[RMDB]
RNA sequence: GGGAACGACUCGAGUAGAGUCGAAAAUGUUUGCAAUUCGUUGCAAACAAACUACCGAGAAGGUUGCUCGGUAUAAACAGCGAACCCUUGGAAACAAGGGAACUAUGGAACGCUUCGGCGUUCCAAAGAUAAGAACAGGAUUCGUCCUGUUCUUAUCAAAAGAAACAACAACAACAAC
Reactivity to 2A3 in 0.01 (KOAc 150mM, MgCl2 10mM, bicine 150mM(pH8.5), 24C), signal-to-noise 5, nucleotides 027 to 126: u040g000u000u000u000g000c010a020a010u060u050c170g060u070u020g000c000a000a000a000c000a000a050a010c030u010a000c010c010g010a000g010a080a130g300g110u220u260g050c000u000c000g000g040u000a010u080a040a050a010c040a020g130c040g100a080a100c000c000c000u000u000g030g010a030a060a030c000a000a010g000g010g020a000a000c010u020a050u060g000g010a000a000c000g010c010u040u070c220g090g000c000g000u000u000c000c000a010a010a000
Reactivity to DMS in 0.01 (KOAc 150mM, MgCl2 10mM, bicine 150mM(pH8.5), 24C), signal-to-noise 7, nucleotides 027 to 126: u000g000u000u010u000g000c000a020a020u000u020c180g030u000u000g010c010a000a010a010c000a030a090a100c150u010a010c010c000g000a020g010a120a180g010g020u000u020g020c010u000c000g010g010u000a020u000a040a080a080c210a080g010c110g000a070a160c010c000c000u000u000g000g000a120a120a170c010a010a010g010g010g010a010a040c050u000a140u000g000g000a010a000c000g010c000u000u010c170g020g010c000g020u000u000c000c000a010a020a050